About this RNA: The record gives the reactivity of an RNA of 177 nucleotides to DMS and 2A3. Values cover nucleotides 27 to 126. Conditions: 150 mM KOAc, 10 mM MgCl2 and 150 mM bicine (pH 8.5), 24 C. For 2A3 the reverse transcriptase was SuperScript II with manganese. Values are in units of 0.01, from 0 to 300, in steps of 10.
RNA sequence: GGGAACGACUCGAGUAGAGUCGAAAAGUGCGGGCACAAAAAACAACGUUUUUUGAACGUUGGCUCUGCCAGCGGCCCCAUAGGGGCGAAUAAAUCACUUUUUGUGAUUUAUGAGUAAUCAUUUACGGUCGUACAUGAUAUUCGUAUCAUGUACGACAAAAGAAACAACAACAACAAC
Reactivity to DMS in 0.01 (KOAc 150mM, MgCl2 10mM, bicine 150mM(pH8.5), 24C), signal-to-noise 3, nucleotides 027 to 126: g010u020g030c020g000g000g010c010a100c190a000a030a070a050a090a200c010a010a080c030g000u000u010u000u020u030u020g020a020a030c010g010u000u000g000g000c090u040c110u030g010c000c000a100g030c100g010g000c000c000c000c020a100u030a050g020g020g020g010c020g000a090a010u010a000a020a000u000c010a010c000u000u030u010u010u050g000u000g000a020u000u000u010a000u000g000a160g010u010a080a060u000c100a070u010u020u030a060c240g000
Reactivity to 2A3 in 0.01 (KOAc 150mM, MgCl2 10mM, bicine 150mM(pH8.5), 24C), signal-to-noise 2, nucleotides 027 to 126: g080u090g020c040g000g010g000c020a010c080a050a150a020a020a010a020c030a050a020c030g000u010u010u010u000u070u270g100a040a000c010g000u000u020g020g010c020u040c050u200g000c010c000a000g030c040g070g030c010c000c050c010a080u190a170g060g010g010g010c020g010a050a000u000a000a000a010u010c000a000c030u120u170u160u300u300g000u000g010a010u000u010u020a010u040g000a020g010u120a080a090u120c070a130u020u090u260a100c140g050